[RMDB]
RNA sequence: GGGAACGACUCGAGUAGAGUCGAAAACUCGCGCGAACAUAGAGGCGUGGAGCGCGACAUGAAUCAGCCUCAAUUAGAUUAAUGGUCGACAGAUCAGCGGCGAUCAGCGACCUAAUUAGAAGCCGCUACCGGAAGAGGAGACGCUCGACGGACGUCACCGUAAUAAUGGAUUCGUCCAUUAUUACGGAAAAGAAACAACAACAACAAC
Reactivity to 2A3 in 0.01 (KOAc 150mM, MgCl2 10mM, bicine 150mM(pH8.5), 24C), signal-to-noise 4, nucleotides 027 to 156: c020u000c000g000c010g000c010g080a280a020c000a020u080a070g000a020g030g000c000g000u000g010g050a100g000c020g000c000g030a040c030a180u280g100a110a110u130c020a040g020c020c000u020c000a010a120u100u110a020g070a100u050u130a080a070u170g000g010u000c010g020a060c060a000g000a020u030c010a080g020c040g050g010c000g000a010u020c020a000g010c000g010a010c000c000u000a010a030u060u100a020g100a120a000g020c000c000g000c020u010a080c010c020g090g010a130a040g010a050g080g040a080g020a050c080g020c090u040c030g050a050c010g020g020a020c000g030u040c030a020
Reactivity to DMS in 0.01 (KOAc 150mM, MgCl2 10mM, bicine 150mM(pH8.5), 24C), signal-to-noise 1, nucleotides 027 to 156: c070u010c010g030c010g030c040g020a140a180c070a140u010a160g010a020g010g000c020g000u010g020g020a290g000c060g010c000g000a090c110a110u000g000a100a160u010c050a070g000c030c040u000c030a090a120u000u000a100g020a120u000u000a120a160u040g000g000u000c000g040a060c030a030g000a170u000c130a120g020c080g000g010c000g000a060u000c010a090g000c150g010a000c010c000u010a000a040u000u050a110g000a060a030g000c050c020g000c150u010a130c050c030g030g010a040a140g000a120g000g040a110g020a050c040g040c040u010c030g010a160c030g010g000a030c010g000u010c040a150
An RNA of 207 nucleotides, treated with 2A3 and DMS and read out base by base. Source: RMDB library OK3TST, as collected in RNAgym. The reactions ran in a buffer of 150 mM KOAc, 10 mM MgCl2 and 150 mM bicine (pH 8.5), at 24 C. For DMS the reverse transcriptase was MarathonRT.